[RMDB]
RNA sequence: GGGAACGACUCGAGUAGAGUCGAAAACAUAGCGUUUCACAAUGUGCGCCAUUAACAUUGUUUAUGCAAGCACGUUUCGCAAUGUACGGCGCAGAAACAUUCCCAACACAAAUACGCUUCACGAUGUAAAACAUCGGUGCGUUCGCGCACCGAUGAAGUUUCUUAACUCGUUCGCGAGUUAAGAAACAAAAGAAACAACAACAACAAC
Reactivity to DMS in 0.01 (KOAc 150mM, MgCl2 10mM, bicine 150mM(pH8.5), 24C), signal-to-noise 2, nucleotides 027 to 156: c080a100u010a100g000c080g000u010u000u000c080a120c070a100a110u010g040u000g000c020g030c050c040a140u010u000a140a120c030a050u010u000g010u000u000u000a070u000g020c040a110a150g040c150a120c010g010u020u000u000c090g030c020a020a010u000g060u010a110c100g030g050c020g000c010a110g010a000a030a030c020a120u010u000c030c020c000a100a100c080a160c080a120a060a080u010a060c030g060c040u030u000c050a060c050g040a100u010g000u010a070a080a120a170c010a000u000c010g020g050u010g000c000g040u000u000c230g040c000g020c020a000c000c000g000a010u000g010a040a060
Reactivity to 2A3 in 0.01 (KOAc 150mM, MgCl2 10mM, bicine 150mM(pH8.5), 24C), signal-to-noise 7, nucleotides 027 to 156: c080a090u140a020g050c030g020u030u090u110c150a130c060a150a200u170g030u040g080c000g010c030c010a090u130u160a070a010c010a020u020u020g040u050u120u110a100u130g080c090a070a100g100c080a060c160g020u050u130u140c030g030c000a000a000u000g000u010a030c070g000g000c000g010c010a000g010a000a050a000c010a020u000u010c000c000c000a060a010c070a010c010a020a150a010u140a030c020g030c020u080u130c080a070c120g140a110u130g060u280a020a070a100a040c000a000u000c000g000g010u000g000c000g000u010u030c120g020c000g000c020a000c000c000g000a000u010g000a000a000
An RNA of 207 nucleotides, treated with DMS and 2A3 and read out base by base. For DMS the reverse transcriptase was MarathonRT. Reactivities are given for positions 27 through 156. For 2A3 the reverse transcriptase was SuperScript II with manganese. The 2A3 profile rests on 4,982 reads.